[RMDB]
RNA sequence: GGGAACGACUCGAGUAGAGUCGAAAACAGACUCGAGCGAAAGCUCGGCGAAAGCCGCGUACAUGUGACGGUCGGCAUGUGUACAGUCGACAGUUACUCUUCGGAGUAACAAUAGAAACAACAACAAAUACCACUACCCUUUCGAGGGUAGUGGUAUAAAAGAAACAACAACAACAAC
Reactivity to DMS in 0.01 (KOAc 150mM, MgCl2 10mM, bicine 150mM(pH8.5), 24C), signal-to-noise 3, nucleotides 027 to 126: c160a090g000a040c020u020c040g000a000g010c020g000a220a030a160g000c000u000c000g010g020c010g000a150a140a080g010c230c020g000c020g000u000a000c000a000u000g000u000g000a090c040g030g020u030c170g050g010c000a000u020g000u000g020u000a010c010a010g000u010c010g000a080c210a180g000u000u000a000c030u010c010u020u000c260g020g000a040g000u010a010a030c010a100a060u010a070g030a120a040a030c090a020a030c180a030a090c150a120a110
Reactivity to 2A3 in 0.01 (KOAc 150mM, MgCl2 10mM, bicine 150mM(pH8.5), 24C), signal-to-noise 5, nucleotides 027 to 126: c050a000g010a000c000u000c010g000a010g000c010g050a120a010a000g000c000u010c000g000g010c000g040a130a050a000g130c040c000g000c010g000u000a010c000a010u010g020u020g090a120c030g060g250u160c080g070g010c000a010u030g000u000g000u010a000c000a010g020u020c010g030a030c030a040g000u000u000a000c000u000c000u000u080c220g100g000a000g000u010a000a010c010a010a000u230a060g120a050a140a030c080a040a000c010a030a000c030a050a200

This 177-nucleotide RNA was probed chemically with DMS and 2A3. For 2A3, 4,654 sequencing reads were counted. Conditions: 150 mM KOAc, 10 mM MgCl2 and 150 mM bicine (pH 8.5), 24 C. Source: RMDB library OK1LIB, as collected in RNAgym.